Conditions: 150 mM KOAc, 10 mM MgCl2 and 150 mM bicine (pH 8.5), 24 C. Structure probing data (2A3 and DMS) for a 177-nucleotide construct. For DMS, 9,424 sequencing reads were counted. DMS (dimethyl sulfate) methylates the pairing face of unpaired adenines and cytosines. The data come from the RNA Mapping Database (RMDB), library OK1LIB. 2A3 adducts were read by reverse transcription with SuperScript II with manganese. For DMS the reverse transcriptase was MarathonRT.

[RMDB]
RNA sequence: GGGAACGACUCGAGUAGAGUCGAAAAGAUGAGCAGGCCGAUAAUCUUGUGCAGUAUGCAUGCUCGUAACUCCAGCGCACAAGUGGAAGCACAAGAUUUCAAUCCAGCAUAGCGCAGGAGCCGCAGAAAAUGCUGGCAUAUUCGUAUGCCAGCAUUUAAAAGAAACAACAACAACAAC
Reactivity to 2A3 in 0.01 (KOAc 150mM, MgCl2 10mM, bicine 150mM(pH8.5), 24C), signal-to-noise 5, nucleotides 027 to 126: g060a060u190g010a020g000c010a010g020g060c020c070g070a090u100a150a000u020c010u010u020g000u000g000c040a120g080u180a050u090g060c020a010u020g000c010u000c020g020u010a030a010c010u010c010c000a060g010c030g020c010a040c020a230a090g080u060g110g010a120a010g000c000a000c010a010a000g000a000u000u070u110c070a050a060u020c020c000a000g000c060a150u150a120g000c020g000c030a020g000g010a020g010c030c020g020c030a020g120a040
Reactivity to DMS in 0.01 (KOAc 150mM, MgCl2 10mM, bicine 150mM(pH8.5), 24C), signal-to-noise 5, nucleotides 027 to 126: g010a030u000g000a050g000c020a030g010g010c030c300g010a080u020a030a030u010c000u000u010g030u010g010c020a170g040u020a100u030g000c000a040u010g010c040u000c020g010u020a040a160c030u010c020c010a070g010c030g010c020a090c220a110a120g020u030g000g010a110a120g010c000a010c000a010a020g000a070u010u000u030c170a090a090u020c040c020a040g020c110a140u030a090g010c030g010c010a080g000g000a030g000c060c030g000c140a090g000a070